This 207-nucleotide RNA was probed chemically with 2A3.

RNA sequence: GGGAACGACUCGAGUAGAGUCGAAAAGGUAGUCGAGGAGAGUAUCCUAAGGUGAGCGAGCGAACUCUCGUUAAGGAACUCGGCAAAAUGACCCCGUAACUUCGGGAGAAGGGGUGCUGACUUCGGUCAGCCGCAGUGAAUAGGCCCAAGCGACUGUACAUCGAAAAUUCUUCGGAAUUUUCGAUGUAAAAGAAACAACAACAACAAC
Reactivity to 2A3 in 0.01 (KOAc 150mM, MgCl2 10mM, bicine 150mM(pH8.5), 24C), signal-to-noise 1, nucleotides 027 to 156: g040g010u050a010g010u020c030g000a000g060g020a110g020a020g030u060a210u140c030c030u080a080a020g060g040u090g060a020g030c070g040a040g000c110g060a140a090c040u010c010u010c010g070u070u130a120a050g010g010a020a000c010u000c020g040g050c040a050a030a040a040u070g050a050c010c000c000c000g020u010a020a070c010u040u130c130g030g100g000a060g030a030a010g000g000g010g000u010g000c010u010g020a060c010u000u060c190g050g010u010c040a000g000c010c010g010c010a010g050u040g030a050a050u040a120g040g000c000c000c010a030a010g040c000g020a010c000u060g010u040
The data come from the RNA Mapping Database (RMDB), library PDB130.